This 207-nucleotide RNA was probed chemically with DMS and 2A3. For 2A3 the reverse transcriptase was SuperScript II with manganese. The reactions ran in a buffer of 150 mM KOAc, 10 mM MgCl2 and 150 mM bicine (pH 8.5), at 24 C.

RNA sequence: GGGAACGACUCGAGUAGAGUCGAAAAGGCGUCGUCCGGCUCUCCUCGGAGCCUCGCUGCUCUGGGCGGAAGAGUCUUCUGACUUUUCUAGCCUAUUCAGCAUUGCGCUCUUGAGGCCCGGCGAAACGCGGUUCGUCUGCUGAGGAUGCCUCCGCUACAAAUAGGAAACCUUCGGGUUUCCUAUUUGAAAAGAAACAACAACAACAAC
Reactivity to DMS in 0.01 (KOAc 150mM, MgCl2 10mM, bicine 150mM(pH8.5), 24C), signal-to-noise 1, nucleotides 027 to 156: g020g000c000g030u000c000g010u000c030c080g010g020c160u010c100u000c010c020u010c020g040g000a070g050c000c010u000c120g030c040u000g020c060u010c020u010g000g010g020c000g000g000a020a000g000a020g010u000c010u000u000c230u020g010a040c030u000u000u000u010c010u010a170g010c010c010u000a030u000u020c010a050g060c000a220u010u010g030c130g010c020u010c020u020u010g070a030g030g020c180c000c020g020g000c030g000a040a010a060c010g020c000g030g000u000u000c040g000u010c080u000g000c030u000g000a220g000g000a220u000g020c040c030u010c000c030g000c090u010a300
Reactivity to 2A3 in 0.01 (KOAc 150mM, MgCl2 10mM, bicine 150mM(pH8.5), 24C), signal-to-noise 3, nucleotides 027 to 156: g080g000c020g010u020c010g080u130c010c030g020g030c070u070c070u070c100c020u020c040g000g000a000g000c010c010u050c050g000c010u010g000c010u000c010u020g000g010g000c020g000g010a010a000g000a000g000u000c050u230u090c160u300g010a000c000u030u000u010u000c030u060a180g000c000c000u000a000u060u130c000a000g020c010a010u030u280g010c130g000c000u000c000u040u300g000a000g000g010c010c000c000g000g000c000g000a010a040a000c040g010c000g000g010u020u040c010g060u010c030u040g000c020u050g010a030g060g050a190u130g030c010c020u020c020c040g020c040u060a040